[RMDB]
RNA sequence: GGGAACGACUCGAGUAGAGUCGAAAAAGCGGUACACGCCGUCGGCCGAGAUAGUAAACUCGCCGCUGUUCGGGUUGGUGCCGAUGGCCGCAGACGCGACGACGGCGUGAUCGAUAGACAGGGUGCCGGAGUCAUCGACAUACAUGACGGCCGUAUACUCUGAGACAUACUUCGGUAUGUCUCAGAGAAAAGAAACAACAACAACAAC
Reactivity to 2A3 in 0.01 (KOAc 150mM, MgCl2 10mM, bicine 150mM(pH8.5), 24C), signal-to-noise 1, nucleotides 027 to 156: a010g030c020g000g030u040a090c030a000c050g010c000c000g000u000c000g000g030c080c000g090a090g030a020u280a070g220u090a070a300a140c030u000c020g040c050c000g000c030u030g150u090u010c000g010g000g020u090u130g200g050u150g130c060c000g000a010u050g010g000c000c010g000c000a050g040a150c050g030c060g100a020c040g000a000c020g000g000c000g000u000g000a000u000c000g040a000u020a020g080a030c090a000g060g160g000u060g010c060c000g020g070a030g000u000c050a020u040c020g050a030c130a070u300a000c170a040u090g020a000c010g030g050c030c000g000u090a130u060a030